[RMDB]
This 177-nucleotide RNA was probed chemically with 2A3 and DMS. Values cover nucleotides 27 to 126. For DMS the reverse transcriptase was MarathonRT. Source: RMDB library RFMREP, as collected in RNAgym. The DMS profile rests on 1,139 reads. The 2A3 profile rests on 1,069 reads.
RNA sequence: GGGAACGACUCGAGUAGAGUCGAAAAUCUAUUUUGAACAUUUGCCUGCUACCUUGGCAUAACAUCAAUAAGGUACAAACAUCGCAAAAAGUCAUCAUAAGGUGGGUUUUAGUACGUAGGCGCUGUAUCACACAAGCAAGUUCGCUUGCUUGUGUGAAAAAGAAACAACAACAACAAC
Reactivity to 2A3 in 0.01 (KOAc 150mM, MgCl2 10mM, bicine 150mM(pH8.5), 24C), signal-to-noise 1, nucleotides 027 to 126: u010c010u020a110u040u160u060u170g110a100a070c050a130u060u030u120g010c010c010u050g050c070u050a030c000c010u010u040g030g030c000a020u120a080a040c050a070u110c000a000a030u140a040a020g000g020u010a000c060a000a050a000c040a030u040c020g030c060a030a000a090a010a090g250u050c010a030u020c000a030u050a170a070g000g050u020g020g070g000u060u030u000u060a030g030u030a020c060g040u040a000g030g000c040g000c040u030g000u030a080
Reactivity to DMS in 0.01 (KOAc 150mM, MgCl2 10mM, bicine 150mM(pH8.5), 24C), signal-to-noise 2, nucleotides 027 to 126: u000c050u000a080u000u010u000u000g030a050a120c080a130u000u000u010g010c000c010u010g030c200u000a030c010c050u010u000g000g000c040a070u010a130a120c150a120u020c060a070a040u000a000a020g020g010u000a030c200a090a140a040c160a040u010c090g010c070a050a040a030a030a030g010u000c030a030u000c060a080u000a140a040g020g020u000g000g020g000u000u000u000u000a080g000u000a030c150g010u000a130g000g030c030g000c110u000g000u000a080